[RMDB]
RNA sequence: GGGAACGACUCGAGUAGAGUCGAAAAUUGCCGACUGCACAUGGUCGUGAGGUUCCUUCGGUCGAAUAGCUUUAAGAUCCUUAAUACAAAUCGUGUGACCUUCCAAAGGAACAGAGUCACUUUGCUGAGAUCUGCUGGAGUUCGCUCCAGCAGAUCUAAAAGAAACAACAACAACAAC
Reactivity to 2A3 in 0.01 (KOAc 150mM, MgCl2 10mM, bicine 150mM(pH8.5), 24C), signal-to-noise 2, nucleotides 027 to 126: u000u100g130c000c000g000a040c000u010g000c040a040c010a150u220g100g010u000c070g050u070g020a020g010g020u020u010c000c000u020u050c010g000g000u030c000g000a050a290u100a100g030c040u040u210u240a190a040g010a110u080c000c000u070u160a090a010u140a230c040a060a150a050u070c010g050u010g010u000g150a050c000c010u020u140c000c000a070a120a160g050g000a000a000c010a000g010a000g000u030c000a000c000u130u100u080g050c010u020g020
Reactivity to DMS in 0.01 (KOAc 150mM, MgCl2 10mM, bicine 150mM(pH8.5), 24C), signal-to-noise 1, nucleotides 027 to 126: u040u000g000c060c080g040a010c030u000g080c030a070c120a170u000g030g000u040c000g000u000g000a040g000g000u000u000c000c000u000u000c110g000g040u000c030g000a170a010u030a290g050c060u050u040u020a160a070g000a090u010c030c100u000u060a100a110u030a160c300a200a150a040u000c130g000u000g000u050g050a110c160c000u000u000c000c000a110a130a030g000g000a000a010c120a130g000a110g000u000c000a100c120u000u000u000g000c040u000g000